[RMDB]
Chemical mapping of a 177-nucleotide RNA with 2A3 and DMS.
RNA sequence: GGGAACGACUCGAGUAGAGUCGAAAAGAUAUGGAUAAUAGGAUGCCGAUGAAACCUUUCGGAAACGAAAGGUGGAGGAACUACAUCCCUAUUAUCCUAAGUCAAAAGACGGCCUUCGGGCCGUCAACGUCUUUUACAUGUUCGCAUGUAAAAGACGAAAAGAAACAACAACAACAAC
Reactivity to 2A3 in 0.01 (KOAc 150mM, MgCl2 10mM, bicine 150mM(pH8.5), 24C), signal-to-noise 1, nucleotides 027 to 126: g000a020u100a010u110g000g000a010u000a010a010u000a010g020g010a020u030g090c050c040g230a300u060g000a000a020a000c010c000u030u000u000c020g020g060a080a030a050c010g000a020a000a000g020g000u000g000g000a020g000g030a050a000c060u190a050c180a020u040c070c000c000u020a010u010u000a000u000c000c000u010a100a020g040u010c010a020a060a000a230g000a000c030g000g030c050c020u060u170c250g050g080g000c050c000g000u010c010a000a000
Reactivity to DMS in 0.01 (KOAc 150mM, MgCl2 10mM, bicine 150mM(pH8.5), 24C), signal-to-noise 2, nucleotides 027 to 126: g010a040u000a300u010g000g000a000u000a000a020u010a010g000g020a030u000g010c050c080g010a080u010g000a240a170a020c010c000u000u000u000c000g010g020a100a050a150c000g020a000a000a000g000g000u000g000g020a060g000g010a070a020c120u000a250c010a010u000c110c020c070u010a000u000u000a010u000c000c000u000a010a040g000u020c040a070a090a150a090g000a020c010g000g000c000c020u000u010c280g000g020g020c000c010g030u000c000a010a060
For DMS the reverse transcriptase was MarathonRT.